Structure probing data (DMS and 2A3) for a 177-nucleotide construct.
[RMDB]
RNA sequence: GGGAACGACUCGAGUAGAGUCGAAAAGUACCAGGUAGUCACAUCUUCGUGUUCAUGGUACCAUGAAAGGGUAUACAACUGACCACUCUUGGGAUAUUCACUACCCCAAAAGGAUGGGUAACCAUUCGCUAUCCAUCCUAUUCGUAGGAUGGAUAGCAAAAGAAACAACAACAACAAC
Reactivity to DMS in 0.01 (KOAc 150mM, MgCl2 10mM, bicine 150mM(pH8.5), 24C), signal-to-noise 3, nucleotides 027 to 126: g010u000a120c010c000a150g000g010u010a080g010u030c080a120c120a050u000c070u000u040c150g000u030g000u020u000c030a040u000g000g000u000a030c000c040a050u030g010a100a120a110g010g000g000u030a010u010a040c120a080a110c180u030g010a080c030c000a030c030u020c060u030u020g000g010g010a090u000a060u000u000c200a070c120u000a050c070c010c030c020a010a030a060a070g010g000a000u000g000g010g000u060a100a100c000c010a050u020u010c040
Reactivity to 2A3 in 0.01 (KOAc 150mM, MgCl2 10mM, bicine 150mM(pH8.5), 24C), signal-to-noise 9, nucleotides 027 to 126: g040u030a050c010c010a010g020g050u080a040g070u090c050a020c000a100u080c100u190u160c120g020u020g020u110u030c020a030u030g020g000u030a020c010c000a040u220g130a140a050a070g140g020g020u070a050u040a100c070a120a060c100u080g020a020c020c000a020c020u080c030u050u040g040g020g020a040u050a110u140u160c030a020c050u080a080c000c000c000c020a020a130a020a010g040g010a030u030g000g000g080u050a050a080c010c000a020u040u040c030
It was measured as part of the RMDB library OK1LIB. DMS adducts were read by reverse transcription with MarathonRT. The reactions ran in a buffer of 150 mM KOAc, 10 mM MgCl2 and 150 mM bicine (pH 8.5), at 24 C. High 2A3 reactivity points to a flexible backbone, as in loops and unpaired stretches. For 2A3 the reverse transcriptase was SuperScript II with manganese.